[RMDB]
RNA sequence: GGGAACGACUCGAGUAGAGUCGAAAAGUGCACUAUGUUUAGGGAUGCAGAGGGCCGUAUGACACCAUACUGCCAUGAUCCUACUGUUUUGCCUGGGGCUUUUGCGUACAGUCAGAUGAGGCCUCAUUAACCUCUUAGUUCGCUAAGAGGAAAAGAAACAACAACAACAAC
Reactivity to 2A3 in 0.01 (KOAc 150mM, MgCl2 10mM, bicine 150mM(pH8.5), 24C), signal-to-noise 9, nucleotides 027 to 129: g090u090g020c040a020c050u060a040u150g110u050u150u160a080g020g010g010a030u100g140c030a020g070a170g090g010g000c000c010g000u000a010u010g060a090c030a030c130c030a020u000a020c000u010g000c000c010a020u040g010a010u010c030c000u030a080c030u050g080u080u080u090u060g050c020c030u020g000g000g000g000c000u050u040u080u100g040c040g030u090a140c050a120g080u090c020a010g070a140u090g040a050g010g020c000c000u000c000a000u010u040a020a030
Reactivity to DMS in 0.01 (KOAc 150mM, MgCl2 10mM, bicine 150mM(pH8.5), 24C), signal-to-noise 9, nucleotides 027 to 129: g020u000g000c060a010c010u020a090u060g010u020u020u030a060g000g010g020a070u040g020c010a050g000a150g040g030g030c000c080g040u030a010u000g000a180c250a170c300c020a000u000a030c010u020g010c040c030a090u010g030a050u030c040c020u040a060c080u000g040u010u020u020u010g020c050c080u000g030g020g020g030c060u020u020u020u060g000c230g000u040a120c140a110g030u040c060a090g000a140u080g000a020g020g010c010c000u000c000a000u050u030a080a180
The record gives the reactivity of an RNA of 170 nucleotides to 2A3 and DMS. For 2A3 the reverse transcriptase was SuperScript II with manganese. For 2A3, 37,599 sequencing reads were counted. The reactions ran in a buffer of 150 mM KOAc, 10 mM MgCl2 and 150 mM bicine (pH 8.5), at 24 C.